The data come from the RNA Mapping Database (RMDB), library TTRDES. This 177-nucleotide RNA was probed chemically with DMS. Reactivities are given for positions 27 through 126.
[RMDB]
RNA sequence: GGGAACGACUCGAGUAGAGUCGAAAAAAAAAGAUAUGGAAUGAGUAGGAAUACUAGAGCGUUGAAAGCCUUUCGGAAACGAAAGGCUGGAGCUCUAGGAUAAAUCUACCAUUCCUAAGUCAAAAAAUCUAUCUUAAGUGUUCGCACUUAAGAUAGAAAAAGAAACAACAACAACAAC
Reactivity to DMS in 0.01 (KOAc 150mM, MgCl2 10mM, bicine 150mM(pH8.5), 24C), signal-to-noise 1, nucleotides 027 to 126: a070a120a080a100a140g000a020u000a090u020g000g000a010a000u000g000a240g010u000a000g000g000a150a130u020a090c010u000a010g000a020g020c010g020u020u000g000a090a070a030g000c000c000u000u000u000c000g000g010a040a030a040c000g000a010a010a000g000g010c010u000g000g000a020g000c010u000c020u000a010g000g000a040u000a110a150a090u000c010u000a000c000c000a020u000u000c000c000u000a010a050g000u010c000a000a020a120a070a090a080
The reactions ran in a buffer of 150 mM KOAc, 10 mM MgCl2 and 150 mM bicine (pH 8.5), at 24 C. The DMS profile rests on 1,878 reads. For DMS the reverse transcriptase was MarathonRT.